An RNA of 207 nucleotides, treated with DMS and 2A3 and read out base by base. It was measured as part of the RMDB library OK3TST. 2A3 adducts were read by reverse transcription with SuperScript II with manganese. The DMS profile rests on 1,942 reads. DMS (dimethyl sulfate) methylates the pairing face of unpaired adenines and cytosines. Conditions: 150 mM KOAc, 10 mM MgCl2 and 150 mM bicine (pH 8.5), 24 C.

RNA sequence: GGGAACGACUCGAGUAGAGUCGAAAAGCUCUCAGAGUUCACCCAAAGGACCCCAGAUGGCUGACCUUCAACAUCUUGUUGAUUGGGUGCCAGGACAAGAACUAAUUAGUACUGGUAACAAGCUUGUUCGUUUUUCAGAGAGCACAGAGAAGAAAGAAUUAGGCAUUUUAUUCGUAAAAUGCCUAAUAAAAGAAACAACAACAACAAC
Reactivity to DMS in 0.01 (KOAc 150mM, MgCl2 10mM, bicine 150mM(pH8.5), 24C), signal-to-noise 1, nucleotides 027 to 156: g020c040u000c000u000c010a140g000a120g060u000u010c030a230c050c000c000a120a140a220g030g000a070c020c010c020c020a150g010a050u000g020g000c060u020g000a040c030c010u000u000c030a000a080c030a100u000c130u000u010g020u000u010g010a130u000u000g000g020g030u010g010c050c020a080g040g040a040c040a050a100g010a090a210c130u000a070a120u000u000a120g000u010a070c020u000g010g000u000a080a030c060a100a110g000c050u000u000g020u010u000c020g020u000u000u020u000u000c050a110g000a080g000a020g020c000a180c020a110g010a130g010a040a070g010a040a010a130g000a090
Reactivity to 2A3 in 0.01 (KOAc 150mM, MgCl2 10mM, bicine 150mM(pH8.5), 24C), signal-to-noise 2, nucleotides 027 to 156: g000c000u010c000u020c010a020g000a000g080u070u090c010a060c020c000c060a090a050a110g120g000a080c020c010c050c080a020g040a120u110g010g010c060u080g170a200c010c000u080u070c030a030a010c010a070u070c070u240u240g000u020u000g020a080u010u100g010g000g000u010g010c020c010a030g020g020a010c030a060a040g080a130a040c040u070a130a130u090u070a030g040u060a030c040u060g060g000u030a090a100c020a030a000g000c010u010u140g010u050u020c020g080u050u030u050u100u130c000a020g010a010g000a000g060c040a000c020a010g120a010g040a100a060g020a020a160a030g110a050